[RMDB]
RNA sequence: GGGAACGACUCGAGUAGAGUCGAAAAGAUAUGGAUAUGUCAGACAGCAACAGCAUCUUUCGGAAACGAAAGAUGACAUGCUGUAUGACUGUAUCCUAAGUCAAAAGUGAUACCUUCGGGUAUCACAGUACUCACCUAGCUUCGGCUAGGUGAGUACAAAAGAAACAACAACAACAAC
Reactivity to 2A3 in 0.01 (KOAc 150mM, MgCl2 10mM, bicine 150mM(pH8.5), 24C), signal-to-noise 1, nucleotides 027 to 126: g040a010u080a070u170g000g000a010u030a000u040g000u000c000a020g020a050c010a000g030c010a030a170c020a250g100c000a010u000c010u000u000u000c020g000g100a110a130a070c040g000a000a000a010g020a000u010g050a000c020a020u030g000c020u020g000u000a020u010g000a000c010u000g000u000a000u000c000c000u030a120a050g090u030c050a020a030a120a200g000u000g000a000u000a010c010c000u000u070c300g130g040g000u010a000u000c000a000c010a020
Reactivity to DMS in 0.01 (KOAc 150mM, MgCl2 10mM, bicine 150mM(pH8.5), 24C), signal-to-noise 2, nucleotides 027 to 126: g000a040u010a300u000g030g000a010u000a040u010g000u000c000a060g000a080c010a000g000c000a040a080c300a200g000c010a010u000c000u000u010u000c000g000g010a200a090a300c010g010a010a000a050g010a010u030g010a010c060a180u000g010c000u000g000u000a020u000g000a020c020u040g020u000a010u010c000c000u000a090a160g080u010c030a060a090a180a060g010u000g010a000u000a010c000c010u000u020c170g030g010g010u000a000u000c000a000c000a060